[RMDB]
RNA sequence: GGGAACGACUCGAGUAGAGUCGAAAAUGCUUAGAAUUCAAUAGAUCAGUUGACCUACUAACUAGCUUCCAGUUUGAGAUAAUAGAAUUGUGUGUUCAAGUACUAUAAGAGCAUCCAGGGUAUUUGGCACUCUCUUAGAAUUCGUUCUAAGAGAGUGAAAAGAAACAACAACAACAAC
Reactivity to DMS in 0.01 (KOAc 150mM, MgCl2 10mM, bicine 150mM(pH8.5), 24C), signal-to-noise 9, nucleotides 027 to 126: u000g010c040u000u010a080g010a100a100u010u010c080a060a090u010a050g000a050u000c040a150g010u000u010g010a050c040c020u000a050c080u000a070a090c060u000a050g010c060u000u000c020c020a090g010u000u000u000g000a090g000a070u000a060a100u010a070g010a060a080u000u000g020u000g020u000g010u000u010c020a040a060g010u000a050c060u000a070u010a080a120g000a070g010c040a030u000c050c030a080g010g000g000u010a060u000u000u000g010g010
Reactivity to 2A3 in 0.01 (KOAc 150mM, MgCl2 10mM, bicine 150mM(pH8.5), 24C), signal-to-noise 6, nucleotides 027 to 126: u060g010c010u070u050a030g070a150a090u200u090c030a060a090u050a110g080a090u090c040a040g080u030u060g070a040c000c000u040a040c020u030a130a030c020u000a030g040c000u040u030c030c020a080g020u030u090u130g120a100g010a020u100a110a050u050a130g110a120a120u090u080g050u020g000u010g010u050u020c020a030a010g030u000a060c020u030a020u040a260a060g020a010g020c000a020u000c020c010a020g070g020g030u120a120u110u120u050g070g000
Conditions: 150 mM KOAc, 10 mM MgCl2 and 150 mM bicine (pH 8.5), 24 C. Structure probing data (DMS and 2A3) for a 177-nucleotide construct. As a SHAPE reagent, 2A3 marks flexible, mostly unpaired nucleotides at the ribose 2'-OH. For DMS the reverse transcriptase was MarathonRT.